[RMDB]
RNA sequence: GGGAACGACUCGAGUAGAGUCGAAAAGUGAUACAGGUCGAGAGUGAGUCUCCUCUCGCAAAUCAAAGGCUCAAAAAAAAGUAACUGCGAAUAACAUCGUCAGCUUCAAACGGGUAGCCAUAGCAGCCUAGUCUGUAAAAGCUACAUUUUCUUGUCAGCUUAUACGGGAGUUCGCUCCCGUAUAAGCAAAAGAAACAACAACAACAAC
Reactivity to 2A3 in 0.01 (KOAc 150mM, MgCl2 10mM, bicine 150mM(pH8.5), 24C), signal-to-noise 3, nucleotides 027 to 156: g060u050g050a080u140a210c100a060g070g140u100c010g000a000g010a000g000u030g010a010g000u000c040u080c110c020u020c010u000c010g110c120a000a030a000u080c050a050a000a010g000g000c000u000c000a000a020a070a050a000a000a020a050g040u040a060a000c010u020g000c010g010a060a040u050a130a030c020a060u020c020g150u110c050a060g000c060u110u110c060a110a160a090c040g100g050g000u000a000g000c010c010a060u080a010g010c000a000g000c010c100u190a100g040u090c000u000g010u010a020a020a020a020g010c000u000a010c010a030u030u060u000u000c040u010u050g130u100c040a040

An RNA of 207 nucleotides, treated with 2A3 and read out base by base.
Values are in units of 0.01, from 0 to 300, in steps of 10.
The 2A3 profile rests on 2,317 reads.
It was measured as part of the RMDB library ARCHII.